[RMDB]
RNA sequence: GGGAACGACUCGAGUAGAGUCGAAAAAAAAGAUAUGGACGUGGAACUACGCUUGGAUGUGGCGAAGAACAUUUGUCGGAAACGACAAAUGGGAGCCACUGACAAGCGCCACGUCCUAAGUCAAAAAGAAUGUUUGUUACUUCGGUAACAAACAUUCAAAAGAAACAACAACAACAAC
Reactivity to 2A3 in 0.01 (KOAc 150mM, MgCl2 10mM, bicine 150mM(pH8.5), 24C), signal-to-noise 1, nucleotides 027 to 126: a000a000a000a000g020a020u040a010u040g000g000a000c000g030u010g000g050a170a040c200u300a060c300g000c010u000u030g060g030a090u070g020u000g010g010c020g180a300a020g010a010a010c010a010u000u020u020g030u000c000g040g000a020a020a010c030g000a010c020a000a000a010u030g010g000g000a000g000c000c030a000c000u000g010a010c000a000a000g000c000g010c000c010a010c000g000u000c000c000u000a020a010g000u000c010a000a000a000a050a080
Reactivity to DMS in 0.01 (KOAc 150mM, MgCl2 10mM, bicine 150mM(pH8.5), 24C), signal-to-noise 2, nucleotides 027 to 126: a060a050a110a130g000a050u010a170u010g010g000a070c020g020u000g000g000a100a030c220u000a300c020g000c000u000u000g020g000a130u000g040u000g040g020c010g010a060a190g000a060a150c040a000u000u000u010g050u000c000g010g000a030a010a080c000g000a020c000a000a000a000u000g000g000g000a070g000c000c000a040c000u000g040a300c010a000a010g010c000g040c000c000a010c000g050u000c000c010u000a000a030g000u020c040a090a130a070a050a060